[RMDB]
An RNA of 177 nucleotides, treated with 2A3 and DMS and read out base by base. Reactivities are given for positions 27 through 126.
RNA sequence: GGGAACGACUCGAGUAGAGUCGAAAAAUGGCAGCGACAAACCGAGAGGAAAAUGGCAACAACUAUGGCGCAUCGAAAGUGGCUUUUAACCCCUGUUGCCCGACAGCCGCCAUCUGGACCAUAUGCCACUCAUUAUGGGCUUCGGCCCAUAAUGAGUAAAAGAAACAACAACAACAAC
Reactivity to 2A3 in 0.01 (KOAc 150mM, MgCl2 10mM, bicine 150mM(pH8.5), 24C), signal-to-noise 4, nucleotides 027 to 126: a000u040g020g020c020a020g000c000g040a020c080a020a110a020c020c000g050a030g020a110g080g100a070a120a030a020u120g000g000c000a010a000c000a010a000c070u090a100u100g020g000c040g020c050a030u060c100g090a080a040a060g050u050g070g000c020u050u070u080u160a060a060c010c030c000c000u000g030u040u030g000c030c000c000g030a010c070a030g040c020c000g020c000c000a020u020c050u080g050g070a040c020c000a030u030a030u210g040c030c040
Reactivity to DMS in 0.01 (KOAc 150mM, MgCl2 10mM, bicine 150mM(pH8.5), 24C), signal-to-noise 3, nucleotides 027 to 126: a090u030g000g000c000a030g010c010g010a080c140a050a180a040c090c040g030a120g000a220g030g000a050a000a060a100u030g020g000c010a010a080c050a030a080c200u020a060u060g000g010c030g020c020a040u020c060g020a050a090a040g070u000g000g030c000u000u000u010u040a080a100c060c020c140c070u010g000u000u000g000c040c050c050g000a060c140a100g040c050c070g000c000c000a000u010c050u010g010g010a100c040c050a080u020a030u010g010c090c020
Notes: The data come from the RNA Mapping Database (RMDB), library OK1LIB.